RNA sequence: GGGAACGACUCGAGUAGAGUCGAAAACGCUAUUGAUGAGCCAGAAUUAGCCCUUUUGAUGCAAGGCAUGAUGGAAAACAAAAACACGAUUUUUUUAAACCCGGCUUAUACGAUCCUUUUCCAAUCCCUUGGCAGUGUAAUUCGUUACACUGCCAAGAAAAGAAACAACAACAACAAC
Reactivity to 2A3 in 0.01 (KOAc 150mM, MgCl2 10mM, bicine 150mM(pH8.5), 24C), signal-to-noise 1, nucleotides 027 to 126: c070g010c020u030a040u100u180g100a080u060g010a000g000c000c030a030g000a080a100u080u080a060g000c050c000c000u060u110u080u050g120a070u100g010c040a000a060g000g000c000a010u070g030a040u040g100g000a040a110a020a000c030a010a080a030a020a040c070a100c070g060a110u020u040u040u040u000u040u180a020a110a020c040c000c030g050g010c000u090u010a040u000a140c000g000a030u020c010c000u030u010u090u000c000c000a060a070u040c000c000
Reactivity to DMS in 0.01 (KOAc 150mM, MgCl2 10mM, bicine 150mM(pH8.5), 24C), signal-to-noise 1, nucleotides 027 to 126: c080g030c050u010a140u020u000g000a030u000g000a080g020c030c020a050g010a100a060u000u000a100g020c050c030c040u030u000u020u010g010a140u010g050c090a060a090g000g000c050a040u000g020a120u000g010g000a090a030a080a070c080a030a060a070a060a110c100a060c140g000a000u000u000u000u000u000u000u000a040a130a140c000c060c020g020g010c030u010u000a010u000a080c090g000a060u000c020c010u010u010u030u000c060c040a060a110u020c010c050

Background
This 177-nucleotide RNA was probed chemically with 2A3 and DMS. The DMS profile rests on 763 reads. Source: RMDB library OK2TST, as collected in RNAgym. The reactions ran in a buffer of 150 mM KOAc, 10 mM MgCl2 and 150 mM bicine (pH 8.5), at 24 C.